RNA sequence: GGGAACGACUCGAGUAGAGUCGAAAAUGCAACGCUUAACGACGGCACGCUGACGUUGACCGCAGCGGUGAUUGCUUUGGAUGGUUCGAAGGUGGUUCGUCGUGAACUAUCUGCGCCAGUAGCGGAGGCUAUCGGACGUGUUCGCACGUCCGAUAGCAAAAGAAACAACAACAACAAC
Reactivity to DMS in 0.01 (KOAc 150mM, MgCl2 10mM, bicine 150mM(pH8.5), 24C), signal-to-noise 2, nucleotides 027 to 126: u010g010c030a060a140c070g070c010u000u000a080a100c070g030a140c090g000g010c040a110c020g020c060u010g010a070c060g000u010u000g030a100c160c040g050c030a050g020c040g000g030u010g000a120u000u000g030c020u000u020u000g040g000a170u000g010g000u010u010c090g020a100a040g000g010u000g020g030u000u000c000g010u020c300g020u000g000a030a040c060u000a000u010c000u010g010c060g010c010c040a040g000u000a070g030c000g000g050a200g010
Reactivity to 2A3 in 0.01 (KOAc 150mM, MgCl2 10mM, bicine 150mM(pH8.5), 24C), signal-to-noise 2, nucleotides 027 to 126: u170g010c030a030a080c060g010c040u080u080a050a050c050g100a020c000g000g020c020a020c090g010c030u000g010a110c050g000u080u230g180a090c030c060g020c060a000g030c030g000g040u080g040a110u030u190g000c000u020u030u200g150g070a130u040g020g030u100u080c080g060a090a010g020g060u030g000g060u040u020c030g010u070c100g140u190g040a000a000c010u000a010u080c040u050g010c020g000c020c010a060g040u050a000g000c020g020g030a020g100

Source: RMDB library OK2TRN, as collected in RNAgym. This 177-nucleotide RNA was probed chemically with DMS and 2A3. For 2A3, 1,504 sequencing reads were counted. In probing experiments dimethyl sulfate is read out at A N1 and C N3, which are open when not base-paired. DMS adducts were read by reverse transcription with MarathonRT. The reactions ran in a buffer of 150 mM KOAc, 10 mM MgCl2 and 150 mM bicine (pH 8.5), at 24 C.